Overview:
This 177-nucleotide RNA was probed chemically with DMS and 2A3. DMS adducts were read by reverse transcription with MarathonRT. The data come from the RNA Mapping Database (RMDB), libraries RFM100 and RFMREP. DMS (dimethyl sulfate) methylates the pairing face of unpaired adenines and cytosines. The reactions ran in a buffer of 150 mM KOAc, 10 mM MgCl2 and 150 mM bicine (pH 8.5), at 24 C. Values cover nucleotides 27 to 126.

RNA sequence: GGGAACGACUCGAGUAGAGUCGAAAAGAACGCUGGCGGCGUGCCUAAUACAUGCAAGUCGAGCGAAUGGAUUAAGAGCUUGCUCUUAUGAAGUUAGCGGCGGACGGGUGAGUAACACGUGGGUAACUACUUGUAUUCCGUUCGCGGAAUACAAGUAAAAAGAAACAACAACAACAAC
Reactivity to DMS in 0.01 (KOAc 150mM, MgCl2 10mM, bicine 150mM(pH8.5), 24C), signal-to-noise 6, nucleotides 027 to 126: g010a100a080c060g000c010u010g000g020c030g000g010c010g000u010g000c030c080u000a100a100u030a160c130a050u030g000c030a050a090g010u010c030g010a190g030c040g000a040a010u010g000g010a100u000u000a000a010g000a020g000c020u030u010g010c000u010c020u000u000a010u010g000a300a130g010u000u010a070g000c020g000g000c050g000g000a060c050g000g000g010u020g010a130g000u000a050a070c110a050c090g000u010g010g000g010u010a080a120c160
Reactivity to 2A3 in 0.01 (KOAc 150mM, MgCl2 10mM, bicine 150mM(pH8.5), 24C), signal-to-noise 3, nucleotides 027 to 126: g050a050a010c020g000c040u020g050g000c010g030g010c020g030u040g010c000c020u070a080a040u110a080c070a030u110g040c070a110a050g020u020c020g060a020g020c020g040a040a030u040g000g010a010u000u020a010a020g000a000g010c030u090u150g020c000u050c000u000u030a020u020g010a020a010g010u020u050a010g020c030g130g060c020g000g030a030c010g030g000g000u070g030a080g030u080a100a010c040a010c110g030u070g010g000g030u050a070a020c030